[RMDB]
RNA sequence: GGGAACGACUCGAGUAGAGUCGAAAAAAACAAAAACAAAAUCCAGGACCUUCUCCAUAGGCCUACUACAAUGAUUAUACUCAGGAAAUUUAACAUUGAUGUGGCAUAAUUAUCUAAUACGCAGUCUGUAUUCAGAUUUCCUCAACGAUUCCACUAACCUCAGUAAUCGUUUCGACGAUUACUGAGGAAAAGAAACAACAACAACAAC
Reactivity to 2A3 in 0.01 (KOAc 150mM, MgCl2 10mM, bicine 150mM(pH8.5), 24C), signal-to-noise 1, nucleotides 027 to 156: a020a000a000c200a100a160a030a000a000c110a060a110a020a000u040c030c000a010g240g000a240c080c000u080u030c110u090c070c000a090u130a150g000g030c000c030u030a010c000u050a040c010a030a050u050g010a050u030u050a030u130a200c050u090c070a030g230g000a100a130a000u120u240u040a050a030c030a030u060u100g000a010u050g010u030g030g000c030a000u040a220a000u250u060a030u000c000u000a010a010u030a070c040g000c070a040g100u020c140u110g000u000a050u040u080c040a030g000a040u050u030u080c000c000u020c000a060a120c040g010a040u090u040c030c000a050c110u070a060a050

Description: The data come from the RNA Mapping Database (RMDB), library OK3TST. An RNA of 207 nucleotides, treated with 2A3 and read out base by base. Values are in units of 0.01, from 0 to 300, in steps of 10. The RNA was probed in 150 mM KOAc, 10 mM MgCl2 and 150 mM bicine (pH 8.5) at 24 C.